[RMDB]
Structure probing data (DMS and 2A3) for a 177-nucleotide construct. For 2A3, 2,390 sequencing reads were counted. For 2A3 the reverse transcriptase was SuperScript II with manganese.
RNA sequence: GGGAACGACUCGAGUAGAGUCGAAAAUGAUGGUUGGAUGAACAUGAAGGAUAGAUCAGAUGAAUUUAGAUCAUUUGUAAAUGUUAUUGAAGACGCUAGAAUUGAUAAACUUAUUCAAAAGAAAUACGAAUGAUAGUGUUUUCGAACACUAUCAUUCAAAAGAAACAACAACAACAAC
Reactivity to DMS in 0.01 (KOAc 150mM, MgCl2 10mM, bicine 150mM(pH8.5), 24C), signal-to-noise 5, nucleotides 027 to 126: u000g010a120u000g010g020u010u000g010g010a120u010g000a060a030c050a050u010g000a130a220g000g000a050u010a100g020a060u000c020a100g020a150u010g010a070a120u010u020u000a110g000a040u000c000a040u000u000u000g010u010a070a130a050u000g010u000u000a070u000u010g010a220a170g000a040c050g020c070u000a050g000a100a070u010u010g010a100u010a060a040a090c080u010u000a070u000u000c050a070a060a080a080g000a050a070a100u000a070c230
Reactivity to 2A3 in 0.01 (KOAc 150mM, MgCl2 10mM, bicine 150mM(pH8.5), 24C), signal-to-noise 3, nucleotides 027 to 126: u100g060a020u080g060g060u030u030g030g010a030u040g040a010a010c020a030u040g020a050a020g030g020a020u070a110g020a010u090c020a020g050a120u070g080a080a210u090u170u100a060g000a070u030c010a020u010u020u070g050u010a020a060a070u020g010u030u010a240u100u080g020a050a020g000a000c030g020c070u060a060g030a130a070u100u030g010a040u110a080a170a050c040u100u070a070u160u150c070a060a060a060a080g060a030a100a020u090a050c050